[RMDB]
RNA sequence: GGGAACGACUCGAGUAGAGUCGAAAAAGCAGGAGUACGCUCCUGCAUGGGUAGACGAAUUGACCCCAACUGAAGUUCAAUUCUAACGAUAAAAGGAGUUUUAUAUGACUGGACGUACGCGUCCAGAUGACGAUUUCAUUCUUCGGAAUGAAAUCAAGAUAGUAGUGGUCUUCGGACCACUACUAUCAAAAGAAACAACAACAACAAC
Reactivity to DMS in 0.01 (KOAc 150mM, MgCl2 10mM, bicine 150mM(pH8.5), 24C), signal-to-noise 1, nucleotides 027 to 156: a130g000c020a020g050g010a010g030u000a090c300g060c030u000c020c020u000g000c000a000u000g020g090g020u000a130g000a150c180g060a080a040u010u000g000a020c060c000c000c030a060a250c230u000g010a070a070g010u010u000c020a000a040u000u040c030u010a150a090c120g000a230u010a040a010a060a140g030g010a160g000u000u000u000u040a080u000a150u080g010a090c000u000g000g000a020c000g060u000a050c270g050c050g040u020c000c010a030g000a040u000g000a080c130g030a000u000u010u020c010a040u000u000c010u000u000c300g070g010a000a010u020g010a000a000a040u010c020a050a110
Reactivity to 2A3 in 0.01 (KOAc 150mM, MgCl2 10mM, bicine 150mM(pH8.5), 24C), signal-to-noise 4, nucleotides 027 to 156: a010g010c000a000g010g010a000g010u060a040c190g030c080u000c000c000u020g000c010a000u010g000g000g010u220a170g050a240c030g000a020a010u000u000g000a010c000c000c000c010a080a050c200u250g040a010a010g040u060u010c000a000a010u000u010c020u100a100a040c080g070a070u160a140a090a040a070g150g050a100g050u080u040u120u050a180u050a070u150g160a060c010u010g010g020a000c010g010u040a010c220g000c010g160u000c000c000a010g000a010u030g020a010c070g000a000u000u000u000c000a010u000u000c010u010u070c190g070g020a010a000u000g000a000a000a000u000c000a010a020